[RMDB]
RNA sequence: GGGAACGACUCGAGUAGAGUCGAAAACAUGGACCGGACGAGCUCGCCCACUAUGCCAAGGAGGCGGUCGACAUCCAGUACGAGUUCCCGUUCGGAUGGAGGGAGCUGGAGGGGGUUCACAACCGCAGAAAACAGACAAAUUCGUUUGUCUGUUUUCAAAAGAAACAACAACAACAAC
Reactivity to 2A3 in 0.01 (KOAc 150mM, MgCl2 10mM, bicine 150mM(pH8.5), 24C), signal-to-noise 4, nucleotides 027 to 126: c060a090u110g020g030a030c020c050g030g060a030c030g010a010g020c040u060c060g070c020c020c020a040c030u090a080u200g100c040c020a060a060g090g010a060g000g050c020g020g020u030c020g020a030c000a020u010c000c000a020g040u060a040c040g040a030g070u020u030c000c020c000g000u050u040c050g050g070a100u090g010g040a060g030g020g020a040g000c040u030g020g020a080g020g020g000g010g000u060u040c020a020c020a050a040c030c030g040c060a020
Reactivity to DMS in 0.01 (KOAc 150mM, MgCl2 10mM, bicine 150mM(pH8.5), 24C), signal-to-noise 7, nucleotides 027 to 126: c130a090u000g010g010a060c050c020g010g010a060c050g000a220g000c050u000c050g010c020c010c050a160c080u000a070u010g030c150c110a090a080g010g010a190g010g010c040g000g020u000c030g000a120c270a070u000c010c010a060g020u010a070c080g000a100g000u000u010c010c020c000g000u000u000c050g010g000a070u010g000g000a150g000g000g000a070g010c050u000g000g020a100g010g000g000g000g000u000u000c070a050c110a080a100c040c060g020c190a170
This 177-nucleotide RNA was probed chemically with 2A3 and DMS.
DMS adducts were read by reverse transcription with MarathonRT.
The reactions ran in a buffer of 150 mM KOAc, 10 mM MgCl2 and 150 mM bicine (pH 8.5), at 24 C.